Annotation
Structure probing data (DMS and 2A3) for a 207-nucleotide construct. 2A3 is a SHAPE reagent: it acylates the 2'-hydroxyl of flexible nucleotides of all four kinds. Conditions: 150 mM KOAc, 10 mM MgCl2 and 150 mM bicine (pH 8.5), 24 C. Source: RMDB library RFM130, as collected in RNAgym. 2A3 adducts were read by reverse transcription with SuperScript II with manganese.
[RMDB]
RNA sequence: GGGAACGACUCGAGUAGAGUCGAAAAAUGCUGUACAGUGAAGCCCGGAUUCUGUGUGUGCUGCGUUUGCUGAUUUGCCAUACACAUAAAUAUACGUAGCACCACAUGAUUCGGCUUCGUGGUGCUAGCAACUAAAAUCGGAAGUUCGCUUCCGAAAGGAGAUCACUAGUUUCGACUAGUGAUCUCCAAAAGAAACAACAACAACAAC
Reactivity to DMS in 0.01 (KOAc 150mM, MgCl2 10mM, bicine 150mM(pH8.5), 24C), signal-to-noise 1, nucleotides 027 to 156: a070u000g020c030u010g010u010a100c000a000g030u010g000a060a040g050c100c030c040g090g000a040u000u000c180u000g030u000g000u010g030u000g030c060u000g000c060g010u000u000u010g070c120u000g000a210u000u010u000g030c060c130a220u010a250c200a050c080a130u010a030a120a150u010a170u000a070c010g040u000a010g030c000a040c000c000a000c040a100u000g010a120u000u000c000g010g000c000u010u010c010g020u010g000g030u010g030c000u000a030g000c010a090a190c100u000a050a050a110a140u010c010g010g000a040a110g020u000u010c300g050c010u010u000c000c010g000a020a040a170
Reactivity to 2A3 in 0.01 (KOAc 150mM, MgCl2 10mM, bicine 150mM(pH8.5), 24C), signal-to-noise 4, nucleotides 027 to 156: a000u050g010c010u000g000u010a010c010a000g030u010g040a000a010g030c100c080c010g000g000a000u040u020c000u000g000u010g030u010g020u000g050c000u010g000c010g030u040u090u110g080c130u090g070a300u160u100u160g090c090c040a110u170a170c040a010c020a070u160a090a110a020u180a020u020a040c000g010u010a010g000c000a000c000c000a010c000a000u030g000a010u000u000c000g000g000c000u000u000c000g000u010g000g000u000g000c040u080a010g020c000a010a050c030u110a010a030a110a140u060c000g000g000a000a000g010u030u090c130g050c110u010u000c000c000g000a020a010a000